[RMDB]
RNA sequence: GGGAACGACUCGAGUAGAGUCGAAAAGCACCAUUCGUGGUGCAUGAAAACCUUUGUGAGCGAUGUAUGGACAUGAUCACGAAGAACCCAUUGGGUUCUAAGUGAUCAACAGCCAUACCGCUCGCUCACUCUGGUAGAGUACAUCCUUCGGGAUGAAUGAAGUAUCGAUCUUCGGAUCGAUACUUCAAAAAGAAACAACAACAACAAC
Reactivity to DMS in 0.01 (KOAc 150mM, MgCl2 10mM, bicine 150mM(pH8.5), 24C), signal-to-noise 1, nucleotides 027 to 156: g000c040a000c000c000a050u000u030c290g070u000g040g040u000g220c000a110u000g000a180a080a120a090c000c000u030u020u020g040u000g060a000g010c000g030a060u000g010u000a030u020g000g000a030c010a300u000g040a000u000c000a000c010g010a230a030g000a020a000c000c000c030a300u000u000g080g040g040u010u000c020u000a000a300g000u000g000a010u000c000a000a010c050a120g020c000c000a030u000a000c020c090g000c120u000c000g040c030u000c000a020c010u000c100u030g000g000u010a070g000a200g000u000a280c000a030u010c000c020u000u000c300g020g020g000a030u000g000a080a170
Reactivity to 2A3 in 0.01 (KOAc 150mM, MgCl2 10mM, bicine 150mM(pH8.5), 24C), signal-to-noise 2, nucleotides 027 to 156: g000c020a000c020c000a010u070u110c240g110u070g000g000u010g110c010a010u040g010a060a090a010a000c010c000u010u000u030g020u020g000a000g000c010g000a020u300g000u000a000u000g010g050a060c070a050u020g000a000u000c000a000c000g000a000a060g000a000a000c000c000c050a200u160u300g000g000g020u000u010c010u010a020a020g000u000g020a000u000c000a000a000c000a000g040c000c000a000u000a000c000c000g040c000u010c000g000c000u000c000a000c010u020c000u000g050g040u090a040g020a030g110u080a050c020a030u000c020c000u060u160c290g070g000g000a000u030g000a000a110
The data come from the RNA Mapping Database (RMDB), library RNAMAK. An RNA of 207 nucleotides, treated with DMS and 2A3 and read out base by base. The RNA was probed in 150 mM KOAc, 10 mM MgCl2 and 150 mM bicine (pH 8.5) at 24 C. The DMS profile rests on 1,869 reads. For 2A3 the reverse transcriptase was SuperScript II with manganese.